[RMDB]
Description
This 177-nucleotide RNA was probed chemically with DMS and 2A3. Source: RMDB library RFM100, as collected in RNAgym. For 2A3, 4,070 sequencing reads were counted. For DMS the reverse transcriptase was MarathonRT.

RNA sequence: GGGAACGACUCGAGUAGAGUCGAAAAUUGAGCUCCGAAAUCACCACUCUCGCGUGCCGACCAUGUCCUGACAAGGGGAAGGCCACAUCGCGGGCGUCGCUAUGGGCGAGACGCCAGCGGACGCGGCAUUCAGAGGGUGGUUCGCCACCCUCUGAAUAAAAGAAACAACAACAACAAC
Reactivity to DMS in 0.01 (KOAc 150mM, MgCl2 10mM, bicine 150mM(pH8.5), 24C), signal-to-noise 3, nucleotides 027 to 126: u050u010g010a110g020c070u010c030c050g000a100a050a080u020c060a050c010c010a070c050u020c020u010c020g010c090g010u000g020c010c010g000a100c070c030a060u020g010u010c030c000u010g020a130c120a100a140g000g000g000g020a080a120g000g040c020c030a080c040a100u000c020g020c000g000g020g000c010g010u010c020g030c020u000a080u030g010g020g020c040g000a120g010a020c010g010c000c000a050g020c000g010g010a070c050g010c000g000g010c040
Reactivity to 2A3 in 0.01 (KOAc 150mM, MgCl2 10mM, bicine 150mM(pH8.5), 24C), signal-to-noise 5, nucleotides 027 to 126: u110u120g050a020g020c030u000c030c030g030a060a030a060u100c040a040c030c020a020c010u050c000u020c020g030c030g060u050g020c000c010g020a040c000c040a080u110g040u080c010c020u060g080a100c060a070a110g060g000g000g030a030a060g040g000c020c000a010c000a030u060c040g000c000g020g000g000c010g000u010c010g000c040u110a280u300g090g100g010c010g010a020g000a000c000g010c000c000a010g020c000g020g020a020c070g000c020g030g010c010